[RMDB]
RNA sequence: GGGAACGACUCGAGUAGAGUCGAAAAAAAGCGCCCUGAGGUCCCGCCACCUGGGUACACACUCAACAAAUAUCCAGUGAGCAUCCACAGUGCAACACUGUGCUGGUUAUUGAGGAGGCAAAAGGGAAAAAGACAGUGGUGAAGGUGCCUGCCUUCACCCACCGUAUAAUUUCGAUUAUACGGUGGGAAAAGAAACAACAACAACAAC
Reactivity to DMS in 0.01 (KOAc 150mM, MgCl2 10mM, bicine 150mM(pH8.5), 24C), signal-to-noise 2, nucleotides 027 to 156: a100a130a180g050c030g000c000c010c000u000g000a090g010g030u010c010c000c070g090c120c020a060c070c030u010g020g000g010u000a060c060a120c080a090c020u000c030a000a120c040a060a030a050u000a060u000c010c020a040g000u020g000a300g000c050a060u000c030c040a040c060a100g030u000g010c070a090a190c050a080c010u000g030u020g010c060u000g000g000u000u000a060u020u030g000a110g030g010a100g010g050c080a030a070a090a070g020g000g000a050a060a030a070a070g000a120c020a070g000u000g010g020u000g000a080a100g000g000u000g000c030c050u000g020c000c000u000u000c030a210
Reactivity to 2A3 in 0.01 (KOAc 150mM, MgCl2 10mM, bicine 150mM(pH8.5), 24C), signal-to-noise 2, nucleotides 027 to 156: a030a000a030g090c030g040c000c020c010u000g050a040g030g030u020c030c020c020g050c110c020a060c050c040u050g010g000g060u150a010c040a000c000a020c020u060c040a000a150c030a070a150a020u050a010u020c000c000a000g010u030g110a080g110c040a060u050c040c010a020c010a010g010u040g060c130a190a030c030a020c100u000g000u010g010c000u010g020g000u080u040a020u050u110g050a090g040g020a010g000g030c010a000a020a030a070g050g000g000a060a100a000a000a020g070a050c090a050g040u040g040g020u030g040a010a010g010g000u030g050c000c030u050g010c000c000u000u010c000a020